Chemical mapping of a 177-nucleotide RNA with 2A3.
RNA sequence: GGGAACGACUCGAGUAGAGUCGAAAAGCCAGCAUGAUCUGAUCUUUUGCGAUCUCUUUUUUUAUCUGAAUAAGUUGAUGGAAAUAUUGGGUUCCUAAGAUUCAGAUCGUGCUGCGCAGUUUCAUCUUCACAACAUUGGAUUCGUCCAAUGUUGUGAAAAAGAAACAACAACAACAAC
Reactivity to 2A3 in 0.01 (KOAc 150mM, MgCl2 10mM, bicine 150mM(pH8.5), 24C), signal-to-noise 5, nucleotides 027 to 126: g000c000c000a000g000c010a000u000g000a000u000c000u000g010a010u000c000u010u100u100u110g070c140g000a020u000c010u020c010u010u020u020u010u000u000u040a010u000c010u050g140a250a160u240a300a210g150u210u120g030a020u020g000g090a020a030a010u190a090u110u140g000g000g000u010u020c000c000u000a000a010g010a010u250u160c000a000g000a000u010c000g000u000g000c000u010g020c060g000c000a000g000u000u000u000c030a090u040c070u020
High 2A3 reactivity points to a flexible backbone, as in loops and unpaired stretches. The RNA was probed in 150 mM KOAc, 10 mM MgCl2 and 150 mM bicine (pH 8.5) at 24 C. The data come from the RNA Mapping Database (RMDB), libraries RFM100 and RFMREP.